RNA sequence: GGGAACGACUCGAGUAGAGUCGAAAAAGUCGGUCUACGGACCGGCAAAACGUUCAUCUCGUUUUACGGGCCGCAUUAAGAUUGAAGCCAAGGAACGGGGACUUCAGACUACGACUACGGUCGUAGAUUACGCCUCCGAGUUUCGACUCGGAGGCAAUCGUAACCUACGUUUCGACGUAGGUUACGAAAAAGAAACAACAACAACAAC
Reactivity to 2A3 in 0.01 (KOAc 150mM, MgCl2 10mM, bicine 150mM(pH8.5), 24C), signal-to-noise 1, nucleotides 027 to 156: a000g000u000c000g010g000u000c000u000a010c220g070g000a030c000c000g000g040c080a040a060a000a000c060g030u060u030c050a180u120c070u040c010g030u050u030u050u100a120c060g000g000g000c000c010g040c060a060u110u240a050a080g090a180u090u040g000a060a000g000c030c020a040a080g070g000a040a000c050g020g000g000g000a020c030u110u090c090a110g000a200c000u030a000c000g000a010c000u030a000c210g050g000u000c000g000u000a000g000a000u060u050a040c110g000c010c000u000c000c000g000a000g000u090u130u070c130g110a020c010u000c000g020g000a000g000g000c000a000a000